[RMDB]
RNA sequence: GGGAACGACUCGAGUAGAGUCGAAAACUAAAGAUUAGGUUAUUUUCGUUCUUCAUGUUAUGGAGUGUGAGUGAUGAGGAGCUUGCUCUUUUAAGCUCAUAUUACGUAAUAAGUUAAUACUGGAGCGCCUACCGGUCUGGUUCGCCAGACCGGUAGGAAAAGAAACAACAACAACAAC
Reactivity to 2A3 in 0.01 (KOAc 150mM, MgCl2 10mM, bicine 150mM(pH8.5), 24C), signal-to-noise 2, nucleotides 027 to 126: c030u020a090a000a000g060a030u040u180a030g130g100u030u060a120u050u130u040u110c010g000u050u020c000u110u050c020a010u070g080u140u280a030u080g050g000a010g000u050g000u000g040a030g030u050g040a120u230g070a060g010g000a000g010c040u150u030g030c010u050c000u000u000u000u070a030a000g000c000u000c000a000u000a000u030u080a000c000g000u000a000a000u060a030a000g190u000u000a080a010u060a160c060u030g040g050a070g010c080g040